[RMDB]
RNA sequence: GGGAACGACUCGAGUAGAGUCGAAAAUAUGGUUAGCUAACUAUGCAAUGACUACACUGCUAUUGGAGCUUUUAUUGCUGGAUGUGAUUCAUAGUCAACAAUUUCCAAAUCUUCAUAAUUUAUGUCGACCCUUCCUAAGUUUCGACUUAGGAAGGGUAAAAGAAACAACAACAACAAC
Reactivity to 2A3 in 0.01 (KOAc 150mM, MgCl2 10mM, bicine 150mM(pH8.5), 24C), signal-to-noise 2, nucleotides 027 to 126: u170a050u040g050g010u020u050a010g010c070u060a010a060c000u020a030u120g020c040a040a020u050g040a020c000u030a040c100a000c040u070g000c000u050a070u080u160g140g100a070g060c000u080u120u050u120a060u050u140g020c030u030g050g000a060u050g020u010g040a000u020u030c000a010u030a020g060u040c000a020a070c010a050a170u000u030u040c020c000a000a070a200u040c020u080u010c060a100u060a260a150u160u180u220a100u100g130u030c010g020
Reactivity to DMS in 0.01 (KOAc 150mM, MgCl2 10mM, bicine 150mM(pH8.5), 24C), signal-to-noise 3, nucleotides 027 to 126: u010a050u000g000g020u000u000a120g040c050u000a070a050c030u000a030u010g000c130a040a040u000g010a040c060u000a150c150a060c090u000g010c050u000a110u020u000g020g010a050g010c100u010u010u010u010a040u020u030g000c040u000g010g020a140u010g000u010g000a070u000u000c030a030u000a000g010u010c070a050a040c080a070a130u000u000u000c030c000a060a100a080u000c080u010u010c030a020u000a050a130u010u000u020a060u000g010u000c090g000
The record gives the reactivity of an RNA of 177 nucleotides to 2A3 and DMS. Conditions: 150 mM KOAc, 10 mM MgCl2 and 150 mM bicine (pH 8.5), 24 C. The DMS profile rests on 2,346 reads. 2A3 adducts were read by reverse transcription with SuperScript II with manganese.